Conditions: 150 mM KOAc, 10 mM MgCl2 and 150 mM bicine (pH 8.5), 24 C. Chemical mapping of a 177-nucleotide RNA with DMS. DMS (dimethyl sulfate) methylates the pairing face of unpaired adenines and cytosines. It was measured as part of the RMDB library TTRDEL.
RNA sequence: GGGAACGACUCGAGUAGAGUCGAAAAGAUAUGGAGAACCGUCAGCUAUGAAGUCACUCGGAAACGAGUGAGUGGAGCUGGCGGUUCUCCUAAGUCAAACCCUAUGAAGGUUCGCCUUCAUAGGGAACUUGUAAACUUACUUCGGUAAGUUUACAAGAAAAGAAACAACAACAACAAC
Reactivity to DMS in 0.01 (KOAc 150mM, MgCl2 10mM, bicine 150mM(pH8.5), 24C), signal-to-noise 6, nucleotides 027 to 126: g000a040u000a300u010g000g010a010g010a010a000c000c000g030u000c010a000g010c000u000a130u000g000a160a190g010u000c000a000c000u000c010g010g000a090a090a170c010g010a020g010u000g000a020g000u000g020g000a030g010c000u000g000g000c000g000g000u000u000c000u000c000c000u000a000a050g000u000c030a110a090a140c000c000c000u000a000u000g000a010a000g010g010u010u010c280g010c010c000u000u000c000a000u000a000g000g000g000a000a010